The record gives the reactivity of an RNA of 207 nucleotides to 2A3 and DMS. For 2A3, 2,734 sequencing reads were counted. 2A3 adducts were read by reverse transcription with SuperScript II with manganese.

RNA sequence: GGGAACGACUCGAGUAGAGUCGAAAAAGGACUAGACAGAAUUGAAGACCAAAAGUCGUUCAGAAGUUGUAGUAUCGAGAAAAAAGGAAAGGAAAGUUGUAGAAGCGACAAUUCUCAGAUAGUGGUUGUGGCAGGAGAUACGGAGUACGUGUGAGGCAUAGUACAAGGGAUUCGUCCCUUGUACUAUAAAAGAAACAACAACAACAAC
Reactivity to 2A3 in 0.01 (KOAc 150mM, MgCl2 10mM, bicine 150mM(pH8.5), 24C), signal-to-noise 4, nucleotides 027 to 156: a000g050g000a020c020u040a020g020a040c030a040g070a130a100u130u100g040a090a020g010a040c040c000a030a000a030a070g030u030c010g040u020u000c030a040g030a170a050g070u030u050g030u020a040g040u020a050u120c100g000a050g060a070a050a020a030a020a050g040g010a040a030a010g010g020a100a030a040g020u060u050g020u110a040g020a130a000g030c000g040a010c020a020a050u170u020c050u020c040a020g030a160u090a040g060u030g060g050u030u060g030u060g060g000c020a010g020g040a030g010a010u070a040c050g020g000a020g040u050a040c040g000u030g000u010g020a010g050g000c030
Reactivity to DMS in 0.01 (KOAc 150mM, MgCl2 10mM, bicine 150mM(pH8.5), 24C), signal-to-noise 4, nucleotides 027 to 156: a090g020g020a120c050u000a070g030a110c070a300g000a060a140u000u000g010a080a120g020a100c030c040a070a110a080a110g010u000c030g010u040u000c040a080g020a060a160g000u000u000g010u000a080g020u000a070u000c050g000a150g020a000a040a070a080a070a060g020g030a030a080a090g020g010a060a050a110g010u000u000g020u010a080g000a070a130g020c040g020a070c050a010a100u000u010c040u000c050a090g000a120u010a060g020u000g030g020u000u000g040u010g000g000c050a060g040g000a080g010a090u010a080c110g030g000a100g030u000a030c080g000u000g010u000g000a070g020g060c120